[RMDB]
RNA sequence: GGGAACGACUCGAGUAGAGUCGAAAACCCCCGGGCUCCUCCAAUAAAAAGGAAAGACCCACCCACUGGGGUCCGACGUCCCACCCUUUCUUACCUUUUGGCCGGCAUGGUCCCAGCCUCCUCGCUGCAACUAGCAUCUUCGGAUGCUAGAAAAGAAACAACAACAACAAC
Reactivity to DMS in 0.01 (KOAc 150mM, MgCl2 10mM, bicine 150mM(pH8.5), 24C), signal-to-noise 7, nucleotides 027 to 129: c050c000c020c090c060g030g010g050c050u020c060c020u050c030c070a010a010u080a030a090a040a150a110g030g030a090a140a100g040a110c040c010c010a140c050c030c040a100c120u030g040g000g010g020u000c010c030g030a080c090g020u010c000c000c000a140c150c050c040u070u040u020c040u000u000a070c050c030u030u010u050u090g000g030c040c000g040g000c010a030u050g060g000u020c000c050c030a150g030c000c010u010c020c020u000c030g030c030u020g000c090a080a100
Reactivity to 2A3 in 0.01 (KOAc 150mM, MgCl2 10mM, bicine 150mM(pH8.5), 24C), signal-to-noise 8, nucleotides 027 to 129: c000c000c000c010c010g010g010g000c010u000c000c010u030c020c020a080a130u210a140a100a030a020a020g060g030a050a060a030g100a080c000c020c000a040c020c040c010a070c090u090g050g000g000g000u020c010c010g040a090c040g030u030c000c000c000a050c030c010c000u050u090u010c010u070u100a110c020c000u050u060u050u080g040g010c030c000g020g010c050a070u110g010g010u020c000c000c000a040g040c000c000u010c000c000u000c010g020c020u050g010c000a070a070